[RMDB]
RNA sequence: GGGAACGACUCGAGUAGAGUCGAAAAAAAGAUAUGGAGGAGCGAACUACAGGCUAAAUCACUUGGAUUUAAUUGUCGGAAACGACAAUUUGUCAGUGAUGAUGCCUGCGCUCCUCCUAAGUCAAAAGGUAGAGUUUAUCUUCGGAUAAACUCUACCAAAAGAAACAACAACAACAAC
Reactivity to DMS in 0.01 (KOAc 150mM, MgCl2 10mM, bicine 150mM(pH8.5), 24C), signal-to-noise 1, nucleotides 027 to 126: a100a060a060g000a030u000a300u000g000g000a000g060g000a010g030c010g000a120a010c090u010a300c000a010g000g000c010u010a300a100a000u000c000a000c010u000u000g090g000a030u010u010u000a000a020u000u000g000u000c030g010g000a100a130a080c000g030a000c000a020a000u000u000u000g000u010c000a010g010u000g010a000u010g000a140u010g000c000c020u000g000c010g000c010u000c000c020u000c000c000u000a000a020g030u000c000a050a060a120a080
This 177-nucleotide RNA was probed chemically with DMS. Source: RMDB library TTRDES, as collected in RNAgym. Reactivities are given for positions 27 through 126. The reactions ran in a buffer of 150 mM KOAc, 10 mM MgCl2 and 150 mM bicine (pH 8.5), at 24 C.